[RMDB]
RNA sequence: GGGAACGACUCGAGUAGAGUCGAAAAAGACUUCAACUGAACAAGUUGACGUUUCUCAUGAGACUUCUGACGACGAGUGGGCUGCUGCAGUUGAUGAAGCGUUCCCUCUCGAUGAAGCAGAAGAUGUUACCUAAUGAUUCUUCGGAAUCAUUAGGUAAAAAGAAACAACAACAACAAC
Reactivity to DMS in 0.01 (KOAc 150mM, MgCl2 10mM, bicine 150mM(pH8.5), 24C), signal-to-noise 5, nucleotides 027 to 126: a090g000a030c010u000u000c000a000a010c000u000g010a130a110c220a150a020g000u000u000g010a030c060g010u000u000u010c010u010c020a160u000g010a210g000a130c010u000u000c000u000g010a080c030g000a130c000g010a010g010u010g000g000g030c300u010g000c010u000g000c020a040g010u010u000g000a210u000g000a060a020g010c000g000u010u000c000c000c000u000c000u000c010g020a040u000g000a130a120g000c030a000g000a020a010g000a110u000g010u000
Reactivity to 2A3 in 0.01 (KOAc 150mM, MgCl2 10mM, bicine 150mM(pH8.5), 24C), signal-to-noise 5, nucleotides 027 to 126: a000g010a000c000u010u000c010a000a010c000u030g050a090a040c060a220a010g000u010u000g000a000c000g010u020u030u000c010u010c010a060u160g130a040g060a120c010u020u020c010u020g040a080c020g000a010c010g000a000g000u030g000g020g000c030u070g000c010u020g010c040a050g020u210u170g160a190u060g020a060a010g000c000g010u140u150c000c000c000u000c000u000c000g080a090u090g040a050a030g010c000a000g000a010a000g020a030u090g090u060